Structure probing data (2A3) for a 207-nucleotide construct. The 2A3 profile rests on 813 reads. 2A3 is a SHAPE reagent: it acylates the 2'-hydroxyl of flexible nucleotides of all four kinds.
[RMDB]
RNA sequence: GGGAACGACUCGAGUAGAGUCGAAAACAUCAUGAAGAGAUUGGGGACAAUUGUGGGUGUCUAUAAAGCUCUCUUUGAAAAGCUCUUUAAAGCGAACUCAGGUAAAUGGAAAUGAAAUCUGACUUUUUACUUAGGCCAAAUAACAAUGAGGUUUGAAGCCGUACUGAUAUUUCGAUAUCAGUACGGCAAAAGAAACAACAACAACAAC
Reactivity to 2A3 in 0.01 (KOAc 150mM, MgCl2 10mM, bicine 150mM(pH8.5), 24C), signal-to-noise 2, nucleotides 027 to 156: c010a030u170c020a030u070g110a070a040g040a020g010a050u070u070g020g030g000g010a000c010a080a110u020u100g010u120g000g020g050u020g000u020c060u090a170u110a040a120a000g010c010u000c000u010c000u040u030u050g050a080a060a030a000g020c030u040c000u070u160u090a150a080a000g020c000g030a020a000c010u020c040a010g020g000u000a020a030a050u060g010g070a070a090a030u050g030a060a150a030u110c010u010g020a050c010u100u000u030u040u140a040c050u050u070a070g020g000c030c010a070a050a120u110a060a030c010a000a100u080g020a040g020g060u000u060u100g030a030a030